[RMDB]
RNA sequence: GGGAACGACUCGAGUAGAGUCGAAAAGCACUGGCGUUCGCGCCAGUGCAAAGAACGCGACGGCCACGGAAAUAAAACGGUGAAGAACGCGACAAGCCGUAAAAACGUCGAACUUCGGUUCGACGAACGUAUCAUAUGCCUUCGGGCAUAUGAUACGAAAAGAAACAACAACAACAAC
Reactivity to DMS in 0.01 (KOAc 150mM, MgCl2 10mM, bicine 150mM(pH8.5), 24C), signal-to-noise 2, nucleotides 027 to 126: g010c000a000c000u000g010g020c000g050u010u020c220g040c000g060c030c000a050g020u010g000c000a010a050a070g020a200a140c030g000c010g000a110c000g000g030c030c000a110c060g010g000a090a070a110u020a040a060a070a030c060g000g000u000g020a100a050g040a120a020c070g010c030g000a130c050a100a300g050c030c010g030u000a030a070a080a130a140c000g010u000c000g010a010a030c000u000u030c100g010g010u030u000c000g000a010c000g000a000a010
Reactivity to 2A3 in 0.01 (KOAc 150mM, MgCl2 10mM, bicine 150mM(pH8.5), 24C), signal-to-noise 2, nucleotides 027 to 126: g000c000a000c000u000g020g000c010g040u070u090c200g000c030g000c090c000a000g000u020g010c000a020a000a000g000a090a010c000g000c000g060a030c000g030g000c000c020a070c020g040g060a100a070a020u240a050a220a040a010c000g030g010u030g010a040a120g030a120a010c020g000c010g080a050c000a040a010g040c000c020g000u010a090a030a000a000a000c010g000u010c000g000a010a010c000u060u060c200g100g000u020u020c000g010a010c000g000a010a000
Background
This 177-nucleotide RNA was probed chemically with DMS and 2A3. Reactivities are given for positions 27 through 126. For DMS, 1,026 sequencing reads were counted. The 2A3 profile rests on 1,957 reads. Conditions: 150 mM KOAc, 10 mM MgCl2 and 150 mM bicine (pH 8.5), 24 C.